RNA sequence: GGGAACGACUCGAGUAGAGUCGAAAACAAUGAGGUGCUGGAACAUGUGAAAAAUACGGCUCUCAGUCGUCACGAUAUUGCCUGCUUAUUACCACGCGUUUCUAAUUUGGAACUAAAGCAGGGCAAGUGCUGAGAUGGGAUUCGUCCCAUCUCAGCAAAAAGAAACAACAACAACAAC
Reactivity to DMS in 0.01 (KOAc 150mM, MgCl2 10mM, bicine 150mM(pH8.5), 24C), signal-to-noise 1, nucleotides 027 to 126: c110a070a100u010g000a110g040g010u000g020c000u000g000g040a050a220c150a060u010g010u000g000a000a000a000a070a110u000a140c050g000g000c000u000c070u010c050a010g000u000c040g020u000c040a060c170g000a210u000a100u010u000g010c000c000u010g010c000u010u000a170u010u030a180c050c040a100c170g000c190g010u000u010u020c000u010a070a110u000u010u000g000g020a000a070c150u000a130a150a010g000c030a020g030g000g000c000a020a050g070
Reactivity to 2A3 in 0.01 (KOAc 150mM, MgCl2 10mM, bicine 150mM(pH8.5), 24C), signal-to-noise 1, nucleotides 027 to 126: c000a020a090u070g000a030g020g050u100g120c060u060g070g000a130a030c050a050u130g030u210g200a220a120a000a000a000u140a030c000g000g030c010u000c020u020c020a000g010u020c040g060u060c010a010c130g100a070u040a130u150u030g050c000c000u020g000c000u010u020a040u120u080a120c020c030a030c130g060c130g070u000u080u030c020u020a130a240u230u090u150g060g010a010a020c010u020a070a020a020g000c020a020g000g000g070c000a020a000g030
The data come from the RNA Mapping Database (RMDB), library OK2TRN.
Structure probing data (DMS and 2A3) for a 177-nucleotide construct.
For DMS, 624 sequencing reads were counted.
2A3 adducts were read by reverse transcription with SuperScript II with manganese.
The reactions ran in a buffer of 150 mM KOAc, 10 mM MgCl2 and 150 mM bicine (pH 8.5), at 24 C.
The 2A3 profile rests on 743 reads.
Values cover nucleotides 27 to 126.